[RMDB]
RNA sequence: GGGAACGACUCGAGUAGAGUCGAAAACGUCGUGAACUAGCGACAAUGCCGUAGAUCUAUCGUUAUCUAACCGAAACAUCGUGACUAGUCGUAGAAUAGAACCAGGAGUGGCCGCUGUCAAACAAAGACUAUGUCUCAGAUUCGUCUGAGGCAUAGUAAAAGAAACAACAACAACAAC
Reactivity to DMS in 0.01 (KOAc 150mM, MgCl2 10mM, bicine 150mM(pH8.5), 24C), signal-to-noise 9, nucleotides 027 to 126: c160g010u010c020g020u000g010a100a110c130u020a120g000c020g010a030c040a100a080u020g000c040c030g010u010a070g010a030u010c050u000a090u020c090g000u010u010a060u030c060u010a090a110c110c040g000a090a080a100c160a060u010c040g000u020g020a060c020u010a080g010u000c020g010u010a050g010a060a080u010a070g000a070a070c060c040a050g000g000a070g010u010g000g000c020c020g000c020u010g010u000c070a070a050a080c140a050a090a090g000
Reactivity to 2A3 in 0.01 (KOAc 150mM, MgCl2 10mM, bicine 150mM(pH8.5), 24C), signal-to-noise 9, nucleotides 027 to 126: c060g010u010c010g010u030g080a140a080c090u040a090g010c000g020a010c010a020a050u120g030c020c010g040u060a030g010a100u000c020u050a090u080c070g060u110u040a050u050c050u040a040a080c040c030g050a070a050a030c040a080u080c040g060u050g060a060c030u030a030g050u050c030g040u040a020g030a090a050u070a060g030a030a030c030c010a020g000g030a030g030u040g030g000c000c010g000c030u030g040u060c030a040a060a080c040a040a120a010g050